RNA sequence: GGGAACGACUCGAGUAGAGUCGAAAAGAUAUGGAAGGCUCAGUGAGUGAUGAUGACCAAGAUUCGGAAACGAAUCUUGCAAGUCACCACUGAGGCCUUCCUAAGUCAAACUGUCGUUCGCGACAGAGCACUUAAAUAAGUUCGCUUAUUUAAGUGCAAAAGAAACAACAACAACAAC
Reactivity to DMS in 0.01 (KOAc 150mM, MgCl2 10mM, bicine 150mM(pH8.5), 24C), signal-to-noise 9, nucleotides 027 to 126: g000a050u010a300u000g000g000a010a010g010g020c000u010c000a010g010u000g010a170g040u000g010a010u000g000a100u010g010a170c300c010a000a010g010a010u000u000c000g010g010a150a080a140c000g000a010a010u000c000u000u000g000c020a020a090g000u000c000a000c000c000a010c000u000g000a020g010g010c000c000u000u000c000c000u000a020a090g000u000c040a150a100a260c010u000g000u000c000g010u000u020c300g020c010g010a010c010a000g010a150
Reactivity to 2A3 in 0.01 (KOAc 150mM, MgCl2 10mM, bicine 150mM(pH8.5), 24C), signal-to-noise 6, nucleotides 027 to 126: g020a010u070a030u170g000g000a010a000g010g000c010u010c010a010g050u000g130a250g120u000g000a060u010g030a100u100g030a020c050c010a010a000g000a010u000u000c010g030g020a020a060a070c010g000a000a010u000c000u000u000g020c020a100a120g000u000c000a000c000c000a000c000u000g000a010g000g010c000c000u000u000c000c000u000a000a000g000u000c020a050a060a150c010u010g000u010c010g040u080u100c300g010c010g140a000c010a010g020a050